[RMDB]
RNA sequence: GGGAACGACUCGAGUAGAGUCGAAAACGAGCAGGCCAAGCGCGAUUGCCGUCCGGACCUGGGCGACAUGAUCGCCAUGGACAACGCCAACGACAUCUAUCGCGAGGCACUCAAGCAGCGCGGCGUGUACGAAGGAUACCUUCGGGUAUCCUUCGUAAAAAGAAACAACAACAACAAC
Reactivity to 2A3 in 0.01 (KOAc 150mM, MgCl2 10mM, bicine 150mM(pH8.5), 24C), signal-to-noise 2, nucleotides 027 to 126: c040g000a040g010c060a010g000g100c020c000a040a040g030c020g000c020g160a040u020u030g000c000c020g010u030c020c000g070g130a230c060c070u270g010g020g020c030g000a030c030a070u280g040a130u020c000g010c000c000a020u050g020g010a010c040a090a020c120g000c010c000a040a010c020g020a020c000a090u000c040u070a050u070c020g020c000g050a030g050g000c050a010c050u150c080a070a050g000c030a020g000c050g000c020g010g040c040g030u070g070
Reactivity to DMS in 0.01 (KOAc 150mM, MgCl2 10mM, bicine 150mM(pH8.5), 24C), signal-to-noise 2, nucleotides 027 to 126: c090g060a090g030c090a180g000g000c000c050a070a200g020c070g020c060g020a110u000u000g000c020c000g000u000c040c010g000g020a100c270c150u020g000g000g000c000g000a030c050a040u000g020a120u000c020g000c010c080a150u000g020g000a020c060a040a100c070g000c030c030a120a110c070g000a040c050a050u000c100u000a070u020c040g020c010g000a070g010g000c000a110c100u000c080a130a130g000c040a030g030c010g000c060g000g010c120g010u000g000